[RMDB]
RNA sequence: GGGAACGACUCGAGUAGAGUCGAAAAGGAUGCAGGGUAGUCGAUUGACAAACUACCUCAUGUGCAGUUACACAUUGUCAAUCGAUAUGCGUUCGUAACUGCACAACGCGUAUCGACAUCCGAAUCGCUACUAGUUUGAAUUCGUUCAGACUAGUAGAAAAGAAACAACAACAACAAC
Reactivity to 2A3 in 0.01 (KOAc 150mM, MgCl2 10mM, bicine 150mM(pH8.5), 24C), signal-to-noise 9, nucleotides 027 to 126: g020g000a000u040g020c070a020g060g010g030u030a030g010u020c040g060a160u050u250g050a070c060a030a110a020c040u050a040c010c010u040c010a060u070g000u000g000c010a000g000u020u050a040c080a010c030a110u080u150g060u110c030a080a160u110c090g020a010u030a030u120g050c040g040u030u050c030g000u020a010a020c010u020g000c020a010c010a030a010c010g010c020g010u030a020u060c030g030a040c020a020u000c000c010g030a030a040u090c070g000
Reactivity to DMS in 0.01 (KOAc 150mM, MgCl2 10mM, bicine 150mM(pH8.5), 24C), signal-to-noise 9, nucleotides 027 to 126: g010g010a010u000g010c110a190g010g010g010u000a020g010u000c060g010a190u010u010g010a110c160a090a080a060c080u000a050c050c030u000c110a070u000g010u000g000c010a020g000u000u000a050c060a120c140a090u000u010g020u000c060a080a090u010c090g010a020u000a020u000g010c070g010u000u000c210g010u000a020a020c040u000g000c040a020c040a020a020c090g010c090g010u000a030u000c020g010a130c040a020u000c010c010g010a090a110u010c120g010